[RMDB]
RNA sequence: GGGAACGACUCGAGUAGAGUCGAAAAGGUGGGUCCGGGGGAGGCCGGUCGCGCCCAGGAAAUGCCCUAUACGCGCAGGCCGGACCAUGGGAACCCCAAAGCCACGGAUCCUGCCCUGGCUGGUGUCCAACCCAAGAACGUUCGCGUUCUUGGGUUGAAAAGAAACAACAACAACAAC
Reactivity to DMS in 0.01 (KOAc 150mM, MgCl2 10mM, bicine 150mM(pH8.5), 24C), signal-to-noise 1, nucleotides 027 to 126: g000g000u000g040g010g000u000c020c090g040g000g010g010g010a090g000g000c000c000g020g090u000c010g010c040g010c000c170c210a060g050g010a090a170a060u000g070c140c000c010u000a040u000a120c300g010c000g000c030a140g060g000c000c000g000g000a050c040c040a090u000g000g010g000a090a250c080c030c010c010a050a070a190g000c000c020a140c080g010g000a000u010c010c010u010g000c000c000c000u000g010g010c020u030g000g000u000g000u000c070
Chemical mapping of a 177-nucleotide RNA with DMS. DMS adducts were read by reverse transcription with MarathonRT. The DMS profile rests on 685 reads.